Chemical mapping of a 177-nucleotide RNA with DMS and 2A3.

RNA sequence: GGGAACGACUCGAGUAGAGUCGAAAAAUCGGGCGAGUCGCUCAUCCUGCCUUCUCAUGAGGUGGGCGACUUCGACCUGGCGCGGCUCGCGCGAGGCAAGGAGGUCGGCAUAGAUCAAGGCCGUGGGGCCACCCUACAAAUUCGUUUGUAGGGUGGCAAAAGAAACAACAACAACAAC
Reactivity to DMS in 0.01 (KOAc 150mM, MgCl2 10mM, bicine 150mM(pH8.5), 24C), signal-to-noise 3, nucleotides 027 to 126: a100u010c040g000g000g000c000g010a000g020u010c000g020c020u000c000a050u000c010c010u000g000c280c100u010u000c150u010c130a130u010g000a090g020g020u010g000g000g030c040g000a020c000u000u010c030g010a170c000c020u010g010g010c180g020c030g020g010c060u000c030g000c000g010c010g000a050g000g010c090a100a060g010g010a090g010g010u000c040g000g000c090a080u010a080g010a090u000c120a070a130g000g010c030c030g000u000g010g010g020
Reactivity to 2A3 in 0.01 (KOAc 150mM, MgCl2 10mM, bicine 150mM(pH8.5), 24C), signal-to-noise 2, nucleotides 027 to 126: a000u020c010g000g000g030c020g000a000g000u000c000g010c010u000c010a020u020c000c020u010g070c010c060u250u150c160u090c100a110u220g040a020g080g010u040g010g000g000c000g040a030c010u040u020c020g070a070c000c010u010g030g000c050g020c020g010g040c020u030c060g020c000g010c020g040a040g040g090c030a020a070g060g020a030g000g060u040c020g010g000c040a040u090a030g120a100u130c070a060a010g020g000c000c030g040u040g010g020g060
The RNA was probed in 150 mM KOAc, 10 mM MgCl2 and 150 mM bicine (pH 8.5) at 24 C.
Values cover nucleotides 27 to 126.
For DMS the reverse transcriptase was MarathonRT.